[RMDB]
RNA sequence: GGGAACGACUCGAGUAGAGUCGAAAAGAAUAUACUUCGGACGUCACUGAUUAUGUGCACCUCUGUGUUACUCUUGUUUUGACUGCAGUCCGCUGAACUUGGUUUCCUUUCAAACUGCCACACCCCACCAAAGGUUGACCUUCGGGUCAACCUUUGGAAAAGAAACAACAACAACAAC
Reactivity to 2A3 in 0.01 (KOAc 150mM, MgCl2 10mM, bicine 150mM(pH8.5), 24C), signal-to-noise 1, nucleotides 027 to 126: g050a000a110u220a000u010a080c000u040u110c030g100g000a000c080g000u040c000a000c090u100g100a300u230u050a140u240g110u010g010c040a040c020c000u010c000u030g080u000g000u000u110a070c080u030c020u080u120g050u010u150u060u000g110a080c130u000g010c050a020g010u020c070c000g060c100u020g060a020a140c000u050u070g030g000u130u090u070c000c000u000u000u000c060a030a030a030c020u010g060c020c000a020c000a010c040c010c000c000a000